[RMDB]
RNA sequence: GGGAACGACUCGAGUAGAGUCGAAAAUAUUAGCUGCUUCGGCAGCUAAUAAAAAAGAUAUGGACCACGGAGACAUGUAACAGAUCGGAAACGAUCUGGAUUACAACAGCUCCAGUGGUCCUAAGUCAAAAAACGUACUACCUUCGGGUAGUACGAAGUAGCACAAAAACUUCGGUUUUUGUGCUACAAAAGAAACAACAACAACAAC
Reactivity to 2A3 in 0.01 (KOAc 150mM, MgCl2 10mM, bicine 150mM(pH8.5), 24C), signal-to-noise 1, nucleotides 027 to 156: u090a020u000u000a000g000c020u000g030c000u100u070c220g130g020c020a010g000c000u000a000a000u010a000a000a000a000a000a000g000a000u000a010u010g010g000a000c000c000a000c000g020g000a010g000a000c210a200u300g000u000a030a020c000a000g010a010u000c000g000g000a010a000a000c000g020a010u000c000u000g010g000a070u020u020a000c010a180a060c090a170g000c000u000c010c060a000g000u000g000g000u010c000c000u000a000a010g000u000c030a000a100a000a000a000a160c040g000u020a040c000u020a000c000c000u030u080c230g110g000g000u000a010g010u090a000c010g010a000a020
Chemical mapping of a 207-nucleotide RNA with 2A3. The RNA was probed in 150 mM KOAc, 10 mM MgCl2 and 150 mM bicine (pH 8.5) at 24 C. For 2A3, 1,138 sequencing reads were counted. For 2A3 the reverse transcriptase was SuperScript II with manganese.